RNA sequence: GGGAACGACUCGAGUAGAGUCGAAAAGCGAUGAUUUAAAAUAGCCUUCUUGGUCUUGUGCGCAAAGUACGCAAAAAAGCAGUCAAAAGCGCUUGGAGUGUGACGCACGGAAUCUGAGAGUGUUUCGCAUAUAACAGUGCUUCGGCACUGUUAUAUGAAAAGAAACAACAACAACAAC
Reactivity to 2A3 in 0.01 (KOAc 150mM, MgCl2 10mM, bicine 150mM(pH8.5), 24C), signal-to-noise 2, nucleotides 027 to 126: g050c040g060a070u140g030a050u080u160u300a080a140a120a140u110a040g030c010c010u050u040c030u040u030g030g010u000c010u070u280g010u020g010c010g000c020a060a070a070g100u080a030c020g000c000a000a210a000a160a100a050g000c070a040g040u080c060a020a070a000a130g050c040g010c010u010u010g020g020a020g010u030g000u040g050a020c020g000c010a000c000g020g000a040a040u040c010u040g030a020g010a010g090u050g010u010u020u010c020g010
Reactivity to DMS in 0.01 (KOAc 150mM, MgCl2 10mM, bicine 150mM(pH8.5), 24C), signal-to-noise 4, nucleotides 027 to 126: g010c070g040a100u010g000a070u010u000u020a040a100a100a120u010a150g010c030c020u010u000c050u000u010g020g000u010c010u010u010g030u010g000c030g030c120a070a090a090g030u000a050c050g020c010a000a040a160a050a020a020g010c000a070g030u000c040a080a070a150a210g000c150g000c010u000u000g000g010a300g000u000g000u000g000a070c030g000c000a020c020g000g010a030a050u000c010u020g010a050g000a090g010u000g010u000u000u000c030g000